[RMDB]
RNA sequence: GGGAACGACUCGAGUAGAGUCGAAAAGCGGUGCCCAACACCGUGAGCGGCAGUCCACAUCCUUGCAUGUCCCAACGCAGUGGUGCUUGACUGUCAGCCAGGCGUCGGACAACAAGAGAGUAUUGUAAUGCUACGGAUCCUUCGGGAUCCGUAGCAUAAAAGAAACAACAACAACAAC
Reactivity to DMS in 0.01 (KOAc 150mM, MgCl2 10mM, bicine 150mM(pH8.5), 24C), signal-to-noise 1, nucleotides 027 to 126: g010c060g050g040u010g020c000c030c060a180a140c030a010c000c020g020u000g030a050g010c040g000g010c000a050g020u000c030c200a070c020a050u000c030c010u000u000g020c020a160u000g000u000c000c010c090a070a070c120g010c030a020g020u010g030g010u000g010c070u030u020g000a150c050u000g010u010c020a170g050c050c000a090g000g010c000g030u000c300g000g000a000c050a070a070c070a030a070g000a150g020a070g000u000a120u000u000g020u000a090